About this RNA: An RNA of 177 nucleotides, treated with DMS and 2A3 and read out base by base.
RNA sequence: GGGAACGACUCGAGUAGAGUCGAAAACAACCAAACAGUGAUCUGGAGCUUGAUUUGUGGGGUGAGAGCAAUAAUUCGUGUGCUAUUGAAGGAGUGCUUCCUUACAAUGAAGCUACGUCAUUAGCACCUUCCGUCGGAGUUUCGACUCCGACGGAAGAAAAGAAACAACAACAACAAC
Reactivity to DMS in 0.01 (KOAc 150mM, MgCl2 10mM, bicine 150mM(pH8.5), 24C), signal-to-noise 1, nucleotides 027 to 126: c060a120a260c030c040a110a040a210c120a080g010u000g020a020u000c100u020g010g000a150g000c070u000u000g000a130u030u000u000g070u000g030g020g000g010u020g000a040g030a080g110c150a040a030u010a120a020u010u000c090g010u020g050u000g010c020u020a040u000u000g000a020a030g020g000a220g000u000g000c010u000u000c000c300u030u030a070c300a140a180u010g000a030a040g000c000u000a090c010g000u000c010a010u000u000a010g020c070a010c050
Reactivity to 2A3 in 0.01 (KOAc 150mM, MgCl2 10mM, bicine 150mM(pH8.5), 24C), signal-to-noise 1, nucleotides 027 to 126: c020a010a060c040c000a000a070a060c070a100g070u030g120a110u030c030u060g020g010a000g070c000u040u000g090a100u090u030u130g110u050g030g000g000g020u020g010a060g000a000g020c030a000a040u080a070a090u050u170c130g100u030g010u010g140c010u040a040u020u070g020a040a030g060g050a160g040u060g000c000u000u040c000c020u090u080a090c100a110a300u200g020a010a000g000c000u010a000c020g020u010c020a020u000u000a000g020c000a000c010

Record summary: For DMS the reverse transcriptase was MarathonRT. The reactions ran in a buffer of 150 mM KOAc, 10 mM MgCl2 and 150 mM bicine (pH 8.5), at 24 C. For 2A3, 1,033 sequencing reads were counted. Values are in units of 0.01, from 0 to 300, in steps of 10. 2A3 adducts were read by reverse transcription with SuperScript II with manganese.